This 177-nucleotide RNA was probed chemically with 2A3. Conditions: 150 mM KOAc, 10 mM MgCl2 and 150 mM bicine (pH 8.5), 24 C. Reactivities are given for positions 27 through 126. It was measured as part of the RMDB library OK2TRN.
[RMDB]
RNA sequence: GGGAACGACUCGAGUAGAGUCGAAAAUGGCGAAAGCCUAACUAAAGCAGACGAUGCUUGCCGCCGUCUGCAAGAUAAUUAACGAUGCUACUACUCAUCGCAUCGAUUAGCGGUAAGCAAGAAUUAAGGAAGCUAGAUCGUUCGCGAUCUAGCUUCCAAAAGAAACAACAACAACAAC
Reactivity to 2A3 in 0.01 (KOAc 150mM, MgCl2 10mM, bicine 150mM(pH8.5), 24C), signal-to-noise 1, nucleotides 027 to 126: u080g020g000c010g010a120a000a000g010c020c000u010a040a020c020u030a080a050a080g030c000a000g010a000c000g010a040u190g000c020u000u010g030c030c000g030c000c040g030u010c000u010g000c010a000a000g030a040u300a120a100u060u110a080a000c000g000a010u000g010c010u020a050c010u060a030c050u070c100a110u270c170g060c000a000u040c030g040a050u040u160a010g000c010g000g010u040a000a000g000c000a020a000g090a050a110u230u270a130a020